[RMDB]
RNA sequence: GGGAACGACUCGAGUAGAGUCGAAAACUCAAUCACUACGGUGAUUGAGAAUGCUUACGCCUCAAUUAAGCUUGACUUGAGUGCCUCGAGCAGAUAUAGACUGAAACAUUUAGUAUGGUCAAGCAGGGAGCAACAGCUCGAGUACGCUCGAGCUGAAUAGUGGGGAUUUAUUCGUAAAUCCCCACUAAAAAGAAACAACAACAACAAC
Reactivity to 2A3 in 0.01 (KOAc 150mM, MgCl2 10mM, bicine 150mM(pH8.5), 24C), signal-to-noise 2, nucleotides 027 to 156: c000u000c000a000a000u010c000a000c000u050a030c180g120g000u000g000a000u000u000g000a010g000a000a030u030g000c000u060u100a070c070g020c000c010u130c070a090a140u070u110a100a000g000c040u000u000g010a030c010u030u090g040a020g070u130g010c000c000u090c150g030a050g000c010a000g110a000u150a020u060a030g140a060c080u060g100a040a070a060c060a090u140u150u020a050g060u030a060u130g020g010u000c000a000a000g010c000a040g050g020g000a060g030c010a020a070c010a030g000c020u000c000g000a000g000u010a030c180g040c080u010c000g000a000g000c000u000g000a000a000
Reactivity to DMS in 0.01 (KOAc 150mM, MgCl2 10mM, bicine 150mM(pH8.5), 24C), signal-to-noise 2, nucleotides 027 to 156: c000u000c000a010a000u000c000a020c000u000a060c300g090g070u010g000a020u000u020g050a020g000a070a040u020g030c020u000u000a080c150g000c000c000u020c070a110a150u000u000a130a230g000c040u000u000g010a040c030u000u030g000a080g040u000g030c000c060u000c090g020a070g040c040a190g010a230u030a190u000a200g000a180c020u000g030a170a080a080c050a050u000u000u000a140g000u000a080u010g020g000u000c020a020a020g030c020a190g010g000g000a100g020c040a050a170c000a030g020c000u000c000g000a050g030u010a100c300g050c000u000c000g010a020g010c010u000g010a020a070
An RNA of 207 nucleotides, treated with 2A3 and DMS and read out base by base.
For DMS, 3,212 sequencing reads were counted.
Source: RMDB library OK3TST, as collected in RNAgym.
Values cover nucleotides 27 to 156.